The data come from the RNA Mapping Database (RMDB), library OK2TST. This 177-nucleotide RNA was probed chemically with DMS and 2A3. For DMS, 796 sequencing reads were counted. For 2A3 the reverse transcriptase was SuperScript II with manganese. Conditions: 150 mM KOAc, 10 mM MgCl2 and 150 mM bicine (pH 8.5), 24 C. For DMS the reverse transcriptase was MarathonRT.
RNA sequence: GGGAACGACUCGAGUAGAGUCGAAAACGGCUCCUACGAAGGUGAAAAAGGCGAUGUUGCCUGGAACGAAAUUGCACAUCAUAUGGGAUACGCGAAUCAAGAAGAGCUAUUCCAAAAAGCCGAUGUACCCUGCCUCAUACUUCGGUAUGAGGCAGGGAAAAGAAACAACAACAACAAC
Reactivity to DMS in 0.01 (KOAc 150mM, MgCl2 10mM, bicine 150mM(pH8.5), 24C), signal-to-noise 1, nucleotides 027 to 126: c080g000g000c020u000c020c000u000a040c050g030a090a110g000g070u010g000a040a050a030a060a080g000g020c030g010a010u000g000u000u040g020c000c030u010g000g000a050a210c080g000a070a170a110u000u000g030c000a110c010a020u000c030a080u000a160u000g000g000g000a000u010a020c300g040c000g010a110a020u000c070a060a140g030a120a050g010a300g020c000u000a000u040u000c000c000a000a000a060a060a040g000c050c140g000a180u000g000u000a250
Reactivity to 2A3 in 0.01 (KOAc 150mM, MgCl2 10mM, bicine 150mM(pH8.5), 24C), signal-to-noise 1, nucleotides 027 to 126: c010g030g000c040u070c040c010u020a000c050g050a090a000g140g010u050g110a140a060a040a000a000g060g040c040g030a150u120g110u300u110g070c020c000u030g000g030a120a020c000g060a100a040a130u080u130g040c020a000c030a050u000c030a000u080a100u210g010g000g050a010u020a010c140g030c000g000a020a060u050c110a000a160g190a100a000g000a110g000c000u010a010u000u000c000c000a030a000a000a000a030g040c000c000g000a010u060g030u080a090